This 207-nucleotide RNA was probed chemically with 2A3 and DMS. Source: RMDB library PDB130, as collected in RNAgym. For 2A3, 2,636 sequencing reads were counted.
RNA sequence: GGGAACGACUCGAGUAGAGUCGAAAACUGGUGUAAGGCUUAGAGUGAUGGUCGAGGUGCCCUAUUUAGGGUGAGGAGCCUCGGUGGCAGCCCCACCAAAUCCUCUAUUGGAUAGGAACAGCUGUACUGGGCAGUUACAGCAGUCGUAUGGUAACACGUACUAUUCCAUGUUCGCAUGGAAUAGUACAAAAGAAACAACAACAACAAC
Reactivity to 2A3 in 0.01 (KOAc 150mM, MgCl2 10mM, bicine 150mM(pH8.5), 24C), signal-to-noise 4, nucleotides 027 to 156: c030u040g040g010u010g040u070a100a050g050g010c040u040u090a040g010a060g090u150g060a080u110g080g000u060c030g000a000g000g000u030g000c000c000c010u100a180u130u200u180a030g030g020g020u070g070a140g050g030a030g030c010c040u030c030g020g000u040g010g000c020a030g030c010c000c020c000a000c010c000a010a060a000u020c000c000u010c030u050a150u080u220g040g000a030u060a080g020g020a080a020c020a060g010c010u010g010u050a020c020u020g030g020g020c020a010g020u060u020a020c010a020g010c020a010g030u040c030g010u120a070u070g050g060u090a060a040c040a000c100
Reactivity to DMS in 0.01 (KOAc 150mM, MgCl2 10mM, bicine 150mM(pH8.5), 24C), signal-to-noise 2, nucleotides 027 to 156: c030u000g000g020u010g010u010a060a070g000g010c010u020u000a110g000a120g010u010g020a090u000g010g010u000c040g020a060g040g030u000g000c040c000c010u000a140u000u020u000a170g010g020g020u000g010a140g030g000a250g000c050c010u000c090g060g040u000g020g020c060a100g020c120c070c060c030a170c020c010a030a110a070u000c020c000u010c080u000a190u010u020g010g020a040u020a110g010g010a090a100c090a090g010c030u020g010u000a090c030u010g020g030g000c000a090g040u000u000a020c020a050g020c030a040g000u000c000g000u000a060u000g010g030u000a080a070c120a160c150
Notes:
Conditions: 150 mM KOAc, 10 mM MgCl2 and 150 mM bicine (pH 8.5), 24 C. 2A3 adducts were read by reverse transcription with SuperScript II with manganese.